About this RNA:
An RNA of 177 nucleotides, treated with DMS and read out base by base. For DMS, 2,171 sequencing reads were counted. The reactions ran in a buffer of 150 mM KOAc, 10 mM MgCl2 and 150 mM bicine (pH 8.5), at 24 C. For DMS the reverse transcriptase was MarathonRT.
[RMDB]
RNA sequence: GGGAACGACUCGAGUAGAGUCGAAAAUCCGUGGGGAGAGUAAAGUGCCUGUGUCGUGUAAAGUGACGGUGAGGAGGUAUUUGUUGGGCGCUCUAUAUGACGCUAUCGUGCAUGAUUUGACGGACAAUGGCAGUAAUACGUUCGCGUAUUACUGCCAAAAAGAAACAACAACAACAAC
Reactivity to DMS in 0.01 (KOAc 150mM, MgCl2 10mM, bicine 150mM(pH8.5), 24C), signal-to-noise 2, nucleotides 027 to 126: u010c010c030g050u000g020g010g020g010a170g040a030g010u000a040a110a070g030u000g010c030c020u000g020u000g040u000c050g030u010g010u010a070a080a110g010u000g030a040c060g000g000u000g010a090g000g000a070g000g020u000a040u000u000u000g010u000u000g010g020g010c020g030c060u020c050u000a080u000a080u000g010a040c060g020c050u010a060u010c090g010u000g010c050a070u010g000a070u000u010u000g010a110c050g000g000a050c180a080a100